An RNA of 207 nucleotides, treated with DMS and 2A3 and read out base by base. The reactions ran in a buffer of 150 mM KOAc, 10 mM MgCl2 and 150 mM bicine (pH 8.5), at 24 C. The 2A3 profile rests on 1,751 reads. For DMS the reverse transcriptase was MarathonRT.
RNA sequence: GGGAACGACUCGAGUAGAGUCGAAAAGUGUUCACGAGCCGUUCACAUCCAGGAUGGGAAAGCAUGCAACGUGGCGAUCGCGUGGCAUCUGAGCUAUUGCAUGCGAAAGGAUGGUUGCUCCAUCCGAAACGUACGGCAUGCGAAAGGAUGGCCAACGCGGGUCCUAUAGUUUCGACUAUAGGACCCGAAAAGAAACAACAACAACAAC
Reactivity to DMS in 0.01 (KOAc 150mM, MgCl2 10mM, bicine 150mM(pH8.5), 24C), signal-to-noise 2, nucleotides 027 to 156: g030u020g020u000u000c000a080c000g010a150g020c000c020g060u020u000c010a030c010a150u000c030c060a220g030g010a150u000g030g020g010a060a090a260g010c100a010u000g000c020a040a040c040g020u000g000g020c070g000a100u000c020g030c030g050u010g010g060c000a080u010c060u000g010a300g000c050u000a140u020u000g030c020a030u000g030c000g000a090a130a210g020g020a040u000g010g030u000u000g030c230u000c050c000a000u000c000c000g000a020a030a070c060g000u000a090c140g020g020c030a270u000g020c000g000a080a090a220g000g000a030u000g010g000c120c020a040a110c120g000
Reactivity to 2A3 in 0.01 (KOAc 150mM, MgCl2 10mM, bicine 150mM(pH8.5), 24C), signal-to-noise 3, nucleotides 027 to 156: g050u040g070u110u120c030a010c060g040a020g000c020c010g020u020u040c080a080c010a050u030c040c050a090g170g040a120u150g110g000g040a060a070a000g010c050a020u070g000c010a050a080c060g030u030g040g010c040g030a050u120c050g010c030g020u050g010g030c020a020u000c020u070g070a030g030c040u080a040u130u080g020c010a000u020g020c000g040a030a050a000g010g000a000u010g000g050u040u070g050c070u080c070c000a000u000c000c000g010a010a040a010c030g020u080a010c060g020g000c000a010u010g010c010g100a140a000a000g020g000a000u020g100g070c000c030a090a040c030g000